[RMDB]
RNA sequence: GGGAACGACUCGAGUAGAGUCGAAAAGGUCGUGUAGCUUUGCCCAUUAUCAUGCCUGACCUAGCCAUUCGUGUUCUGGCGUAUAACGUCAUUGGCUAUGUCAUGUGCGUCCGAUUUGGCCUUAUUUGGCUUGCAAAUCGCUUUACAACCAUACCUAGACCUAAAUACGGUUCGCCGUAUUUAGGUCAAAAGAAACAACAACAACAAC
Reactivity to DMS in 0.01 (KOAc 150mM, MgCl2 10mM, bicine 150mM(pH8.5), 24C), signal-to-noise 1, nucleotides 027 to 156: g020g000u010c010g070u010g050u000a070g000c060u000u000u000g010c030c050c050a160u000u010a090u010c030a090u000g030c000c020u000g010a000c020c050u000a040g010c000c020a050u000u000c090g010u010g010u000u000c090u000g000g000c000g070u000a140u000a070a070c020g010u000c020a200u000u010g010g030c020u000a020u010g000u000c020a030u010g020u000g030c010g020u000c080c020g020a180u000u000u010g020g020c000c010u000u020a250u000u010u000g010g030c020u000u000g020c010a030a060a050u010c090g000c050u010u010u000a030c050a050a020c000c010a070u010a210c010c020u000a300
Reactivity to 2A3 in 0.01 (KOAc 150mM, MgCl2 10mM, bicine 150mM(pH8.5), 24C), signal-to-noise 7, nucleotides 027 to 156: g010g010u030c010g030u030g020u080a010g000c010u030u010u030g020c020c040c020a070u190u170a060u090c060a020u110g010c000c000u000g000a000c000c010u000a000g000c000c010a060u120u120c140g130u140g180u300u140c090u100g020g000c010g030u040a140u120a300a080c010g000u000c020a050u010u060g000g000c010u000a000u020g000u000c000a010u110g170u170g030c010g020u050c090c070g020a030u020u010u130g020g010c020c000u160u150a300u210u150u150g010g020c040u020u070g000c000a000a010a040u100c090g010c020u040u090u100a030c030a070a030c040c010a030u080a130c020c000u020a070
The record gives the reactivity of an RNA of 207 nucleotides to DMS and 2A3. For DMS the reverse transcriptase was MarathonRT. It was measured as part of the RMDB library OK3TST.